[RMDB]
Record summary:
This 177-nucleotide RNA was probed chemically with 2A3 and DMS. Conditions: 150 mM KOAc, 10 mM MgCl2 and 150 mM bicine (pH 8.5), 24 C.
RNA sequence: GGGAACGACUCGAGUAGAGUCGAAAAGAUAUGGACACGAAUGAAGCUCCAGUAUCGGAAACGAUACGGAGGGUUCGGUCCUAAGUCAAAACAAAUGUAAAUCCACUUCGGUGGAUUUACAUUUGAACACUGAAAACGGGUUCGCCCGUUUUCAGUGAAAAGAAACAACAACAACAAC
Reactivity to 2A3 in 0.01 (KOAc 150mM, MgCl2 10mM, bicine 150mM(pH8.5), 24C), signal-to-noise 1, nucleotides 027 to 126: g030a010u060a030u110g000g000a080c110a060c300g000a050a040u240g120a290a030g170c030u010c020c080a080g000u000a000u000c000g000g000a070a020a070c010g000a000u010a000c000g010g010a030g030g060g010u030u000c010g010g000u030c000c000u000a120a030g050u020c010a000a010a100a250c010a010a010a010u020g010u000a050a010a000u030c000c000a020c020u080u130c280g060g000u000g000g000a000u000u000u000a000c000a000u000u010u000g000a030a000
Reactivity to DMS in 0.01 (KOAc 150mM, MgCl2 10mM, bicine 150mM(pH8.5), 24C), signal-to-noise 2, nucleotides 027 to 126: g000a050u010a300u000g000g010a000c000a150c010g020a020a020u010g030a140a220g010c010u000c000c000a140g020u000a000u000c000g010g000a140a100a120c020g010a000u000a010c010g000g000a010g010g000g010u000u000c000g030g000u000c000c000u010a020a080g030u000c030a090a060a090a170c000a000a010a010u000g000u000a000a000a000u010c000c010a010c010u000u010c180g030g030u000g000g020a010u000u000u010a000c000a000u010u010u010g010a100a110
For 2A3 the reverse transcriptase was SuperScript II with manganese.